[RMDB]
RNA sequence: GGGAACGACUCGAGUAGAGUCGAAAACGAAAAAGGGGGAACAUGGCUUCUAUCUCUCCUUUGAUUUGGGCCUUUGUGAUUUUCACUCUCGCAGCAAGCUAGAAUUAAUAAAAUCUUCAUUGACAGAUAAGGGAUACAGUUUCGACUGUAUCCCUUAAAAAGAAACAACAACAACAAC
Reactivity to DMS in 0.01 (KOAc 150mM, MgCl2 10mM, bicine 150mM(pH8.5), 24C), signal-to-noise 2, nucleotides 027 to 126: c030g010a050a080a030a040a060g010g000g020g010g000a050a090c120a070u010g000g030c070u000u010c080u020a100u010c030u000c060u000c050c010u000u000u000g020a150u000u000u010g000g000g020c020c010u000u000u010g020u000g000a100u000u000u010u000c090a060c070u000c030u000c070g020c050a110g000c130a060a060g000c050u010a080g010a070a080u000u000a080a060u000a030a030a070a050u000c020u000u020c060a040u000u000g010a080c160a030g010a140